[RMDB]
Structure probing data (DMS and 2A3) for a 177-nucleotide construct. Source: RMDB library OK2TRN, as collected in RNAgym. 2A3 is a SHAPE reagent: it acylates the 2'-hydroxyl of flexible nucleotides of all four kinds. The DMS profile rests on 909 reads. The 2A3 profile rests on 1,046 reads.

RNA sequence: GGGAACGACUCGAGUAGAGUCGAAAAAGCGAAAUUGCGUCCUCGAAAUCCUUGACCAGAAUGACCGCACCGAAAUCGCGCCAACUUGCGGAAGCCGUUUCAGUGCGCGCCAGGGUGUGAAGCUGCAGCUCAUGGCAGUAUUCGUACUGCCAUGAGCAAAAGAAACAACAACAACAAC
Reactivity to DMS in 0.01 (KOAc 150mM, MgCl2 10mM, bicine 150mM(pH8.5), 24C), signal-to-noise 1, nucleotides 027 to 126: a100g030c090g020a130a100a050u000u010g020c010g000u000c000c010u000c090g020a080a050a090u010c040c010u000u000g030a140c070c080a090g010a140a070u000g000a070c060c040g000c000a020c000c000g000a010a040a030u000c160g050c160g030c000c020a020a200c090u000u000g010c120g030g000a230a060g010c010c090g050u000u000u020c060a020g010u010g000c000g040c130g050c080c020a110g030g000g040u000g000u000g000a050a120g020c010u000g000c110a160
Reactivity to 2A3 in 0.01 (KOAc 150mM, MgCl2 10mM, bicine 150mM(pH8.5), 24C), signal-to-noise 1, nucleotides 027 to 126: a000g100c080g040a120a120a020u140u110g020c020g000u040c020c020u000c060g000a000a080a040u070c060c030u100u110g060a070c000c020a040g050a110a060u080g080a180c040c030g020c000a000c010c020g000a000a000a070u230c010g000c000g000c020c070a120a030c070u110u250g040c050g040g050a080a010g130c030c030g020u020u040u000c030a050g000u050g090c110g000c030g080c020c000a060g000g040g070u060g030u020g040a060a030g000c040u070g100c000a030